[RMDB]
RNA sequence: GGGAACGACUCGAGUAGAGUCGAAAAUUGAGGUUUAUGCGUUGCUAAGGCUGGACUACUCUUCUUCUUCGGGAGCCUGAGCGUAAGCCUCGAGCUUGCAAGGCCCGAAGAUCGGCAAGUUAGCUAAGCCUUGGGGGACAUUCGUGUCCUCCGGGGUAAAAGAAACAACAACAACAAC
Reactivity to DMS in 0.01 (KOAc 150mM, MgCl2 10mM, bicine 150mM(pH8.5), 24C), signal-to-noise 8, nucleotides 027 to 126: u020u010g000a030g010g010u000u000u000a020u010g010c040g020u020u020g010c080u010a150a040g000g010c010u000g000g010a080c170u010a060c140u020c080u000u010c050u010u000c000u000u000c010g010g000g000a050g010c010c000u000g000a080g020c100g020u010a010a010g010c000c010u030c160g010a050g010c010u000u000g000c030a120a060g020g010c010c000c000g000a030a020g000a020u030c080g010g000c050a040a050g010u000u010a090g000c040u000a080a240
Reactivity to 2A3 in 0.01 (KOAc 150mM, MgCl2 10mM, bicine 150mM(pH8.5), 24C), signal-to-noise 6, nucleotides 027 to 126: u030u060g010a010g010g020u010u020u000a030u060g020c020g010u030u120g030c060u050a030a020g020g000c000u010g000g030a030c010u050a040c020u030c000u120u010c010u030u000c000u000u000c000g010g000g000a020g060c000c000u010g020a030g000c010g020u050a000a000g000c000c000u010c030g000a040g000c000u000u010g000c000a030a020g020g000c000c000c000g000a000a000g000a010u030c000g010g000c020a010a030g020u030u030a010g010c010u030a040a020